[RMDB]
RNA sequence: GGGAACGACUCGAGUAGAGUCGAAAACGGUGCACUGCGGUACAUGAUAUGCAUGUAUGGCAUGAGCAGUGGAACCGGACGCAGCACUUUAGUCUAUAGUGCGGCCUUUAGGCAGAAGAUGCGAGUCACUUCCUUCCGUCUUCGGGCGGAGGGAAGUAAAAGAAACAACAACAACAAC
Reactivity to DMS in 0.01 (KOAc 150mM, MgCl2 10mM, bicine 150mM(pH8.5), 24C), signal-to-noise 9, nucleotides 027 to 126: c010g010g010u000g010c010a020c010u000g010c000g000g010u000a010c010a010u020g010a270u060a090u040g010c010a010u000g000u000a010u010g010g030c070a100u030g020a140g010c010a010g010u000g010g010a140a050c000c000g000g000a060c040g010c120a230g010c010a030c010u000u010u010a110g010u010c030u000a030u010a020g000u010g000c030g010g010c070c020u010u010u010a020g000g000c010a300g000a030a020g010a080u000g010c010g000a210g000u010c070
Reactivity to 2A3 in 0.01 (KOAc 150mM, MgCl2 10mM, bicine 150mM(pH8.5), 24C), signal-to-noise 9, nucleotides 027 to 126: c000g010g000u020g010c000a000c000u000g000c000g020g010u010a010c000a000u020g070a110u150a070u300g230c020a000u010g010u020a010u020g200g050c110a100u240g130a010g010c010a000g000u010g010g010a030a020c000c000g000g000a000c020g020c120a040g010c010a010c010u020u020u060a050g010u020c010u030a040u030a060g040u080g140c050g040g050c010c000u060u070u030a020g000g000c030a010g030a050a010g060a050u030g010c010g010a020g030u020c030

Annotation:
Chemical mapping of a 177-nucleotide RNA with DMS and 2A3. For DMS the reverse transcriptase was MarathonRT. For 2A3, 63,357 sequencing reads were counted. For 2A3 the reverse transcriptase was SuperScript II with manganese.